[RMDB]
RNA sequence: GGGAACGACUCGAGUAGAGUCGAAAAUCACUCCCACUCUGGGUGCUCUGCUGGCGAUGAGCCGCGAGCGGGGGUUUUUAUCACGGAGCCGUGGAACGUAAAAACGUUCCCAGAGUGGGAGUGAAAAGUUCACGCCGGCUUUCGAGCCGGUGUGGACAAAAGAAACAACAACAACAAC
Reactivity to DMS in 0.01 (KOAc 150mM, MgCl2 10mM, bicine 150mM(pH8.5), 24C), signal-to-noise 4, nucleotides 027 to 126: u010c010a000c000u010c000c000c000a000c000u000c000u010g020g000g010u080g000c000u000c000u030g020c020u040g020g010c010g000a150u040g010a300g000c040c010g020c050g000a010g000c010g010g010g000g010g000u000u010u000u000u050a060u020c090a030c100g010g010a130g050c110c010g010u010g020g020a050a080c180g000u000a030a040a020a060a050c010g010u020u000c000c000c000a000g010a000g050u000g000g000g000a000g000u000g010a010a020a040a090
Reactivity to 2A3 in 0.01 (KOAc 150mM, MgCl2 10mM, bicine 150mM(pH8.5), 24C), signal-to-noise 9, nucleotides 027 to 126: u010c000a000c010u000c000c000c000a010c000u000c000u010g020g010g020u120g030c000u020c060u180g060c090u200g030g020c020g050a110u180g060a090g030c010c000g000c000g000a000g000c010g000g000g000g010g020u040u010u010u000u030a250u110c040a040c100g050g040a080g090c120c020g110u090g030g050a100a040c050g000u060a030a020a020a040a060c030g050u070u040c000c000c000a000g000a000g000u000g000g000g000a000g000u000g000a000a000a000a000
The data come from the RNA Mapping Database (RMDB), library OK1LIB. Chemical mapping of a 177-nucleotide RNA with DMS and 2A3. The DMS profile rests on 10,878 reads. For 2A3 the reverse transcriptase was SuperScript II with manganese. Conditions: 150 mM KOAc, 10 mM MgCl2 and 150 mM bicine (pH 8.5), 24 C.